[RMDB]
RNA sequence: GGGAACGACUCGAGUAGAGUCGAAAAUGCACUCUGGAGAGCGCUUCCUCCCAUACACGAGUACAUCAAGCGUACAGCUGUGGACUCCCCACAACCAUCUGGUGGGACAGAUAGUGAUAACGGUGUCGGGAUAGCACUGAUUCGUCAGUGCUAUCCCAAAAGAAACAACAACAACAAC
Reactivity to 2A3 in 0.01 (KOAc 150mM, MgCl2 10mM, bicine 150mM(pH8.5), 24C), signal-to-noise 4, nucleotides 027 to 126: u200g020c040a000c020u050c000u070g050g110a040g030a020g080c010g010c010u040u040c000c000u060c000c000c000a050u070a070c060a030c040g000a030g030u030a000c020a060u060c100a140a010g020c030g020u120a070c080a140g010c010u010g020u010g050g000a010c010u050c020c010c010c000a100c010a030a090c020c050a070u040c050u050g050g010u020g040g030g020a010c030a010g120a010u120a030g050u050g140a100u070a110a060c090g110g020u040g110u100c020
Reactivity to DMS in 0.01 (KOAc 150mM, MgCl2 10mM, bicine 150mM(pH8.5), 24C), signal-to-noise 2, nucleotides 027 to 126: u060g000c090a030c000u000c010u000g000g000a220g010a060g000c050g000c100u000u000c050c100u000c070c020c000a190u000a010c230a100c060g000a050g000u050a040c000a050u020c170a090a030g000c060g030u000a070c040a060g040c000u000g000u000g020g000a080c110u000c000c000c000c020a020c160a070a070c090c040a060u100c030u060g010g000u050g000g050g000a230c080a030g000a000u000a090g000u060g000a110u010a090a120c250g000g000u000g010u000c210